Chemical mapping of a 177-nucleotide RNA with DMS. The RNA was probed in 150 mM KOAc, 10 mM MgCl2 and 150 mM bicine (pH 8.5) at 24 C.
RNA sequence: GGGAACGACUCGAGUAGAGUCGAAAAAAAAAAAAAAGAUAUGGACGAACUAAGCUUUUGACGUGCGACGUGUCGGAAACGACACCAAGCACGAUAAGCUUAGGUUCGUCCUAAGUCAAAAAAAAAAGCUAUGUAGUUAGUUCGCUAACUACAUAGCAAAAGAAACAACAACAACAAC
Reactivity to DMS in 0.01 (KOAc 150mM, MgCl2 10mM, bicine 150mM(pH8.5), 24C), signal-to-noise 1, nucleotides 027 to 126: a000a000a000a000a010a000a030a000a130a010g020a040u020a300u000g010g000a000c010g000a010a010c000u000a010a000g000c000u000u000u000u020g020a090c060g040u000g010c000g000a300c300g020u000g010u020c000g000g010a070a080a200c000g010a000c010a000c000c070a000a300g030c010a020c000g020a000u000a000a000g000c000u000u000a000g020g030u010u000c030g010u000c000c000u000a010a060g000u000c010a010a000a000a000a000a020a130a090a130a200
The DMS profile rests on 1,083 reads.